[RMDB]
RNA sequence: GGGAACGACUCGAGUAGAGUCGAAAACUGUCUCAGUGUUCAUCCCCUUAUCAAGGAUGCCCGAAACGGUGAGGCGGAAAGCAAAUUAAAUAACGUCAACCCAUCGGGACGGUUGGCCAGUUAAGAAAAAACCGGGGAGUCUUCGGACUCCCCGGAAGUGUUCUAAUAACUUCGGUUAUUAGAACACAAAAGAAACAACAACAACAAC
Reactivity to 2A3 in 0.01 (KOAc 150mM, MgCl2 10mM, bicine 150mM(pH8.5), 24C), signal-to-noise 1, nucleotides 027 to 156: c010u010g060u000c000u000c060a210g160u030g040u100u080c000a000u030c000c020c020c000u060u200a080u170c020a000a020g000g000a010u020g010c000c000c020g040a060a050a000c070g000g090u060g020a010g000g000c030g070g080a150a040a000g060c070a000a040a120u120u150a030a160a080u260a060a000c040g000u000c000a010a000c000c010c020a030u030c000g030g010g010a020c000g000g000u020u000g020g020c010c020a050g040u100u080a160a090g040a130a130a010a050a000a020c010c000g020g000g040g000a020g000u000c000u060u060c060g020g000a030c010u000c020c030c040c000g000g000a000a000
Source information:
Chemical mapping of a 207-nucleotide RNA with 2A3. Values are in units of 0.01, from 0 to 300, in steps of 10. The reactions ran in a buffer of 150 mM KOAc, 10 mM MgCl2 and 150 mM bicine (pH 8.5), at 24 C. For 2A3 the reverse transcriptase was SuperScript II with manganese. The 2A3 profile rests on 567 reads.